Source: RMDB library RNAMAK, as collected in RNAgym. The record gives the reactivity of an RNA of 207 nucleotides to 2A3. For 2A3 the reverse transcriptase was SuperScript II with manganese. For 2A3, 2,011 sequencing reads were counted. The reactions ran in a buffer of 150 mM KOAc, 10 mM MgCl2 and 150 mM bicine (pH 8.5), at 24 C.
RNA sequence: GGGAACGACUCGAGUAGAGUCGAAAAAAAACGCUGGGUCGACGCAAGCAUCGAUGCAGCAAGUCAUCUGAAGCGCGCACGGAUGAUGAUGACCUGCGCGAUGUGAUGACCGUCGACCUGUGCUGAAGCGCGCACGGCAACCGAAAGGUGCGAAAAACCUAGUACUUGACUUCGGUCAAGUACUAGGAAAAGAAACAACAACAACAAC
Reactivity to 2A3 in 0.01 (KOAc 150mM, MgCl2 10mM, bicine 150mM(pH8.5), 24C), signal-to-noise 1, nucleotides 027 to 156: a000a000a000a000c030g010c030u050g000g000g020u000c000g010a000c000g030c050a100a260g030c000a010u010c010g230a240u150g000c000a000g010c010a000a090g000u000c000a000u000c000u010g030a130a030g000c000g010c010g000c010a020c000g020g000a000u000g000a000u000g040a130u050g000a000c000c000u000g000c000g000c010g000a000u000g050u030g080a270u020g000a000c000c000g000u000c000g000a000c000c000u000g000u010g000c000u010g010a090a000g000c000g010c000g000c000a010c040g030g020c010a030a030c000c000g000a050a040a020g000g000u000g000c000g000a150a000a000a000a000